Background
Source: RMDB library OK2TST, as collected in RNAgym. The record gives the reactivity of an RNA of 177 nucleotides to DMS and 2A3. The RNA was probed in 150 mM KOAc, 10 mM MgCl2 and 150 mM bicine (pH 8.5) at 24 C. 2A3 adducts were read by reverse transcription with SuperScript II with manganese. For DMS the reverse transcriptase was MarathonRT.
RNA sequence: GGGAACGACUCGAGUAGAGUCGAAAAGAUCGCCGCCUAUCACGCAAAAACUGACCGUUCGGCGUCGUAUUACUGGUCGAAGAAGGAUCAGGAAAUUUUCAAGCCCUUACGCCUUUUCCGACAGGGAGUGACUGACUACGUUCGCGUAGUCAGUCACAAAAGAAACAACAACAACAAC
Reactivity to DMS in 0.01 (KOAc 150mM, MgCl2 10mM, bicine 150mM(pH8.5), 24C), signal-to-noise 2, nucleotides 027 to 126: g010a170u000c040g010c000c010g000c300c000u020a060u010c060a060c060g000c060a030a050a040a150a090c190u000g010a070c050c090g000u000u000c090g010g000c010g030u010c040g010u010a040u050u000a160c040u000g010g010u000c070g040a010a060g020a080a040g020g000a020u000c300a070g000g000a030a010a130u000u000u000u000c290a120a090g010c090c000c010u010u010a090c160g000c000c000u000u010u010u010c020c010g030a050c020a060g000g000g000a090
Reactivity to 2A3 in 0.01 (KOAc 150mM, MgCl2 10mM, bicine 150mM(pH8.5), 24C), signal-to-noise 1, nucleotides 027 to 126: g030a090u090c020g000c010c000g030c000c000u050a050u040c020a000c060g040c050a010a010a080a090a140c090u130g070a050c020c010g030u030u020c040g060g010c000g050u000c030g000u000a000u010u040a050c040u050g000g010u030c010g000a030a040g000a000a030g080g010a040u030c050a030g060g070a040a110a030u110u090u000u050c120a050a020g050c000c000c000u000u040a030c070g020c000c000u010u020u000u040c000c000g020a020c000a040g090g020g000a150